[RMDB]
RNA sequence: GGGAACGACUCGAGUAGAGUCGAAAAUUCGACGGGGCAUAAGGAGGGUGACUGAAGCCUGCUCGGUAAGAGCAAAUCCCGUAACUGCGAACAACAUCGUACGUUUCUCCCGUCAAGCAGCCCCUGUUUAACUCCUGAGUUUCGACUCAGGAGUUAAAAAAGAAACAACAACAACAAC
Reactivity to 2A3 in 0.01 (KOAc 150mM, MgCl2 10mM, bicine 150mM(pH8.5), 24C), signal-to-noise 3, nucleotides 027 to 126: u120u080c040g010a000c010g010g010g000g100c110a110u070a180a050g080g030a050g020g030g020u040g040a100c040u060g060a050a020g020c000c000u010g000c010u000c000g050g150u290a110a000g010a000g000c000a020a020a020u100c000c000c000g000u000a010a010c000u010g020c020g010a010a010c060a050a030c020a240u020c020g010u020a060c080g010u020u030u030c020u020c000c000c000g010u000c020a000a000g080c030a010g030c000c000c000c030u030g000u040
Reactivity to DMS in 0.01 (KOAc 150mM, MgCl2 10mM, bicine 150mM(pH8.5), 24C), signal-to-noise 3, nucleotides 027 to 126: u040u000c130g010a030c020g000g020g000g000c140a090u000a120a220g000g010a060g010g000g010u020g000a120c160u030g000a100a220g030c030c060u000g010c000u000c010g000g020u030a100a090g000a050g010c050a010a060a050u010c000c010c000g000u030a060a030c060u010g020c000g000a030a070c140a060a120c300a120u020c050g000u000a030c160g010u000u020u030c090u020c040c000c070g030u000c040a070a120g010c110a130g000c020c010c000c030u020g000u050